Chemical mapping of a 177-nucleotide RNA with 2A3 and DMS.
Reactivities are given for positions 27 through 126.
For DMS the reverse transcriptase was MarathonRT.
The data come from the RNA Mapping Database (RMDB), library OK1LIB.
RNA sequence: GGGAACGACUCGAGUAGAGUCGAAAAAGGCACAAAUUAGAGAUAUAGCUGAAUGGCUUCUUGAGUACCAUAAUGGGAGCACAGGUUUAAGUACUGAUAGCCUUAUGGAAGCUGGCUACCCAGCUGCGGAAUGCGUAUCAUUCGUGAUACGCAUUCCAAAAGAAACAACAACAACAAC
Reactivity to 2A3 in 0.01 (KOAc 150mM, MgCl2 10mM, bicine 150mM(pH8.5), 24C), signal-to-noise 5, nucleotides 027 to 126: a020g140g010c090a090c100a120a180a080u190u150a100g030a020g060a060u130a040u140a220g020c000u040g070a140a060u130g090g000c000u060u040c010u010u100g070a050g080u070a110c010c000a060u150a080a060u230g030g020g030a040g050c010a020c020a070g040g040u030u120u150a100a090g090u080a050c000u000g020a070u040a050g080c000c000u050u020a050u100g040g010a000a040g000c020u010g040g010c060u080a080c000c000c010a000g000c000u010g000c010
Reactivity to DMS in 0.01 (KOAc 150mM, MgCl2 10mM, bicine 150mM(pH8.5), 24C), signal-to-noise 3, nucleotides 027 to 126: a040g050g010c010a110c150a030a090a150u000u010a110g000a110g000a100u000a080u030a070g000c020u010g010a130a130u040g000g020c000u000u010c020u020u020g000a110g020u010a130c120c130a040u000a070a030u020g010g020g000a040g000c060a070c060a080g000g010u010u010u010a170a190g040u020a060c060u020g010a070u000a140g000c000c000u000u000a030u000g010g000a070a060g020c000u000g000g000c250u020a100c080c010c010a040g020c010u000g030c260